[RMDB]
RNA sequence: GGGAACGACUCGAGUAGAGUCGAAAAGACGCCUUUAGAAGAAGAGGCUAGGGGGUAUUCCGGUGUGGGAUACUUAGUAAUAUUCAACGCUAAUUGCAUAAGAUUGUAGGACGGAAUUUACAGUCUUUAGAGAUAAGCACGUUCGCGUGCUUAUCAAGUGAGUUGUAAAGUUCGCUUUACAACUCACAAAAGAAACAACAACAACAAC
Reactivity to 2A3 in 0.01 (KOAc 150mM, MgCl2 10mM, bicine 150mM(pH8.5), 24C), signal-to-noise 5, nucleotides 027 to 156: g040a010c040g020c010c010u050u050u080a190g030a280a020g020a050a010g000a040g030g000c020u040a080g010g020g020g000g020u010a030u030u030c040c040g080g070u170g060u180g060g010g000a010u030a030c020u030u040a040g030u070a050a100u040a090u200u120c070a070a060c040g000c060u080a100a060u160u160g020c030a060u040a130a030g010a030u040u040g010u030a030g010g090a020c080g040g030a040a030u100u070u030a020c010a000g000u000c000u020u040u080a100g020a000g000a050u000a000a000g000c000a000c010g010u030u040c100g000c000g080u000g000c000u000u000a000u000c000a010a000
Reactivity to DMS in 0.01 (KOAc 150mM, MgCl2 10mM, bicine 150mM(pH8.5), 24C), signal-to-noise 2, nucleotides 027 to 156: g000a140c090g020c010c020u000u010u020a120g010a120a170g010a210a120g000a090g020g010c010u000a110g000g010g020g010g020u000a110u000u000c070c020g040g020u000g050u010g020g010g020a070u000a000c010u000u000a110g020u020a090a130u000a070u000u000c050a070a070c010g030c010u010a040a140u000u000g030c040a170u000a030a030g020a060u000u000g000u000a060g000g010a160c070g000g000a090a300u000u000u030a050c000a030g000u000c020u010u000u010a090g010a220g020a020u000a000a010g030c020a010c000g020u000u000c280g030c010g010u000g020c000u000u010a000u000c000a050a150